[RMDB]
RNA sequence: GGGAACGACUCGAGUAGAGUCGAAAAGAUUGCUAAUUGGUCUGCGCGAUUGGAUCAAGGCUGCGCAUCUCAGUGUGCACGUAUUUAACUGGGAAAUGGAUCUGGAGCACCGCUACUCCGGGGCCAAACGUCGGGUAAUAUUCGUAUUACCCGACGUAAAAGAAACAACAACAACAAC
Reactivity to DMS in 0.01 (KOAc 150mM, MgCl2 10mM, bicine 150mM(pH8.5), 24C), signal-to-noise 2, nucleotides 027 to 126: g010a110u010u000g030c000u000a070a130u010u020g010g000u000c000u020g020c080g010c150g000a110u010u000g040g000a030u000c010a090a060g010g020c040u000g010c010g010c010a150u030c010u000c030a070g000u000g010u010g010c050a040c190g010u000a090u010u010u000a100a080c020u000g010g000g010a050a190a070u000g010g000a030u020c020u010g010g030a010g000c070a130c090c140g000c090u010a230c000u000c030c010g000g010g000g000c020c040a060a110
Reactivity to 2A3 in 0.01 (KOAc 150mM, MgCl2 10mM, bicine 150mM(pH8.5), 24C), signal-to-noise 2, nucleotides 027 to 126: g040a040u110u120g020c030u070a300a030u030u030g000g010u020c010u040g020c140g000c060g220a190u080u200g010g000a010u030c030a030a030g010g000c000u010g000c000g000c020a080u000c020u000c000a000g010u010g000u020g040c030a000c160g060u090a180u010u190u040a110a020c000u000g000g010g030a010a070a110u100g010g000a010u000c020u020g000g000a000g010c030a030c110c080g000c110u050a020c010u030c020c010g020g020g010g010c000c000a040a040
Description
Structure probing data (DMS and 2A3) for a 177-nucleotide construct. Reactivities are given for positions 27 through 126. For 2A3, 1,981 sequencing reads were counted. For DMS, 1,391 sequencing reads were counted. Conditions: 150 mM KOAc, 10 mM MgCl2 and 150 mM bicine (pH 8.5), 24 C. The data come from the RNA Mapping Database (RMDB), library OK2TST. For 2A3 the reverse transcriptase was SuperScript II with manganese.